An RNA of 207 nucleotides, treated with 2A3 and DMS and read out base by base. Values cover nucleotides 27 to 156. The RNA was probed in 150 mM KOAc, 10 mM MgCl2 and 150 mM bicine (pH 8.5) at 24 C. The 2A3 profile rests on 5,834 reads.
[RMDB]
RNA sequence: GGGAACGACUCGAGUAGAGUCGAAAAGGACUCCGUGAGGAGUCCGUGCAGCGAGAGCUGCACAAGGGCUUAUUGAGACACGGUGCCCCUGCUCUUCGAUGUUGAGAAGAGCAGAGUAGUAGGCGCACGAUUUAUAGUGCGCCGUACGAGUGUCUGAAUGUAACAAGACAUUCGUGUCUUGUUACAUAAAAGAAACAACAACAACAAC
Reactivity to 2A3 in 0.01 (KOAc 150mM, MgCl2 10mM, bicine 150mM(pH8.5), 24C), signal-to-noise 5, nucleotides 027 to 156: g000g000a010c000u010c000c000g030u080g050a060g010g000a000g000u000c010c000g000u000g000c000a000g000c000g020a090g020a020g070c000u010g060c000a000c000a020a050g010g000g010c030u130u090a020u040u140g060a030g000a000c010a000c000g020g000u020g000c000c000c010c000u000g000c000u000c020u010u010c010g120a180u170g070u280u050g100a100g000a060a000g000a010g000c000a000g000a000g000u010a000g000u000a010g000g000c000g010c010a000c010g080a090u040u300u110a220u130a070g000u000g000c000g000c000c000g000u000a000c000g010a020g010u000g000u000c000u000g020a010
Reactivity to DMS in 0.01 (KOAc 150mM, MgCl2 10mM, bicine 150mM(pH8.5), 24C), signal-to-noise 4, nucleotides 027 to 156: g010g010a030c010u000c000c000g050u010g020a260g030g010a030g020u000c010c010g020u000g020c020a020g000c000g020a300g000a300g030c000u000g060c010a010c020a060a110g030g010g020c020u000u000a080u010u000g000a070g010a020c010a010c000g010g000u000g000c030c000c000c000u000g010c000u000c000u000u000c000g000a160u000g000u000u000g020a300g000a030a030g010a010g010c020a020g000a040g010u000a100g010u000a100g010g000c000g020c000a010c000g010a180u000u050u010a170u010a120g010u000g010c000g020c000c000g020u000a010c040g010a160g000u010g010u000c000u000g010a180